[RMDB]
RNA sequence: GGGAACGACUCGAGUAGAGUCGAAAACGAUUACGCGGCCGGCAUCGGCGCUAAUCGAUCGUAGCCGGCGCAUUACGCGAUAUUACGGCUACGAUUAGCGCCGGCUAAUGCGCUACGUAUAUACGGCCGAGCUGGUAUGUUUCGACAUACCAGCUCGAAAAGAAACAACAACAACAAC
Reactivity to 2A3 in 0.01 (KOAc 150mM, MgCl2 10mM, bicine 150mM(pH8.5), 24C), signal-to-noise 2, nucleotides 027 to 126: c000g000a020u020u130a030c050g000c050g000g030c050c050g100g010c030a110u180c030g000g000c000g000c010u010a010a040u090c070g040a110u170c080g010u020a000g000c020c020g050g050c010g000c020a000u150u300a070c150g030c000g040a030u060a110u280u250a050c010g010g040c020u000a000c000g000a000u000u020a000g000c000g000c000c010g000g010c020u030a010a080u110g010c030g000c080u040a020c020g030u050a040u010a000u010a220c070g040g000c110
Reactivity to DMS in 0.01 (KOAc 150mM, MgCl2 10mM, bicine 150mM(pH8.5), 24C), signal-to-noise 2, nucleotides 027 to 126: c020g020a110u000u000a020c070g000c000g020g010c020c090g020g010c100a080u010c020g010g000c000g020c010u000a020a010u010c180g010a100u010c170g020u010a030g020c010c000g000g000c010g000c010a110u000u020a190c280g010c000g020a180u010a140u010u000a130c020g020g010c010u000a020c010g000a020u010u000a010g000c000g000c010c020g000g010c120u010a070a050u010g010c090g010c020u010a040c050g000u010a020u020a040u020a100c020g010g000c100

Conditions: 150 mM KOAc, 10 mM MgCl2 and 150 mM bicine (pH 8.5), 24 C. Structure probing data (2A3 and DMS) for a 177-nucleotide construct. The DMS profile rests on 1,699 reads.